Chemical mapping of a 177-nucleotide RNA with 2A3. The reactions ran in a buffer of 150 mM KOAc, 10 mM MgCl2 and 150 mM bicine (pH 8.5), at 24 C. Reactivities are given for positions 27 through 126. The data come from the RNA Mapping Database (RMDB), library RFM100.
[RMDB]
RNA sequence: GGGAACGACUCGAGUAGAGUCGAAAACUAGAAUAUAAAUAAGCCAGCAUAUGUUUCACAUUGCUUUAGUGCUUUGUUCUUUUCUAUUUUAUUCUUUAUGAUUAAAGUAGUUUCUAAGGAAAACUCUGAGAUAGAUAGCUUUCGAGCUAUCUAUCUCAAAAGAAACAACAACAACAAC
Reactivity to 2A3 in 0.01 (KOAc 150mM, MgCl2 10mM, bicine 150mM(pH8.5), 24C), signal-to-noise 2, nucleotides 027 to 126: c020u040a010g060a030a050u130a010u170a300a150a080u120a040a010g000c000c000a020g010c000a040u000a020u300g050u030u300u160c080a080c000a030u000u040g020c010u090u200u120a150g000u130g120c020u000u040u110g020u030u000c010u030u090u030u000c000u000a010u000u020u000u000a000u010u030c020u000u300u150a140u280g000a010u000u040a000a000a050g030u010a000g010u000u040u060c040u080a090a040g080g070a180a160a070a010c070u090c100u070